Background:
The record gives the reactivity of an RNA of 177 nucleotides to DMS and 2A3. DMS adducts were read by reverse transcription with MarathonRT. Source: RMDB library OK2TRN, as collected in RNAgym. For 2A3, 2,809 sequencing reads were counted. For 2A3 the reverse transcriptase was SuperScript II with manganese.
RNA sequence: GGGAACGACUCGAGUAGAGUCGAAAAUAUAUAUACGCGGCCGGCGCAUUAGCCGCGUAGCUAAUGCCGAUUACGUAUAAUGCGCGCGCGCAUGCAUAUUAUAUAGCGCUAGCGCCGUAGCGCAUCGCGCUAGUGGUUUGUUCGCAAACCACUAGCGAAAAGAAACAACAACAACAAC
Reactivity to DMS in 0.01 (KOAc 150mM, MgCl2 10mM, bicine 150mM(pH8.5), 24C), signal-to-noise 3, nucleotides 027 to 126: u010a090u020a130u020a080u000a010c010g020c020g010g020c040c030g030g020c070g020c090a120u010u010a060g020c020c030g030c120g010u000a020g000c080u000a040a070u000g020c030c030g000a070u010u000a070c110g020u000a030u000a030a030u000g010c010g020c050g000c110g010c080g020c020a140u010g000c050a050u010a060u010u010a060u000a230u000a090g020c040g010c010u000a110g010c040g010c030c070g020u000a010g020c020g010c010a050u000c230g010
Reactivity to 2A3 in 0.01 (KOAc 150mM, MgCl2 10mM, bicine 150mM(pH8.5), 24C), signal-to-noise 2, nucleotides 027 to 126: u040a000u010a010u010a000u010a020c000g000c010g010g000c050c000g000g020c060g010c040a030u050u170a000g020c040c020g090c060g070u010a030g010c010u030a070a070u070g040c040c010g090a070u050u120a050c040g030u030a030u040a120a060u050g000c010g000c030g010c040g000c010g010c020a040u090g000c020a020u080a040u250u150a120u120a050u090a120g010c010g000c030u000a030g020c000g000c050c020g010u020a030g000c010g010c020a000u060c070g040